Source: RMDB library TTRDES, as collected in RNAgym. An RNA of 177 nucleotides, treated with 2A3 and DMS and read out base by base. The RNA was probed in 150 mM KOAc, 10 mM MgCl2 and 150 mM bicine (pH 8.5) at 24 C. For DMS the reverse transcriptase was MarathonRT. Values cover nucleotides 27 to 126. The 2A3 profile rests on 20,148 reads. The DMS profile rests on 11,709 reads. For 2A3 the reverse transcriptase was SuperScript II with manganese.

RNA sequence: GGGAACGACUCGAGUAGAGUCGAAAAGAUAUGGAUGAUGUCUUGUCAGGUGGGCCAUCGGAAACGAUGGUUACACCUUGGAUUUAGACCGCUCAUCCUAAGUCAAAUCACGUGUUCGCACGUGAAACGUAAAAACAUGGUUCGCCAUGUUUUUACGAAAAGAAACAACAACAACAAC
Reactivity to 2A3 in 0.01 (KOAc 150mM, MgCl2 10mM, bicine 150mM(pH8.5), 24C), signal-to-noise 5, nucleotides 027 to 126: g050a050u090a050u170g010g010a010u020g000a010u300g000u000c000u020u020g010u010c020a000g020g000u020g010g010g000c020c000a010u000c000g030g020a060a080a010c010g000a000u000g000g010u010u040a050c000a000c030c000u000u070g030g000a000u280u190u120a010g000a000c000c010g000c010u000c000a010u010c010c010u020a150a020g060u040c040a030a030a170u040c000a000c010g010u010g060u060u100c300g000c110a000c000g010u010g000a100a070a010
Reactivity to DMS in 0.01 (KOAc 150mM, MgCl2 10mM, bicine 150mM(pH8.5), 24C), signal-to-noise 5, nucleotides 027 to 126: g000a030u000a300u000g010g010a010u010g000a010u000g000u000c000u000u010g000u000c010a030g000g010u000g010g000g000c000c000a000u000c000g020g010a160a100a200c000g010a010u000g000g000u000u000a080c000a010c000c000u000u000g000g010a020u000u010u000a010g000a010c010c010g000c020u000c000a010u000c000c000u010a040a110g010u000c040a110a150a210u000c000a000c000g020u000g020u000u010c250g020c010a010c000g010u000g000a010a080a170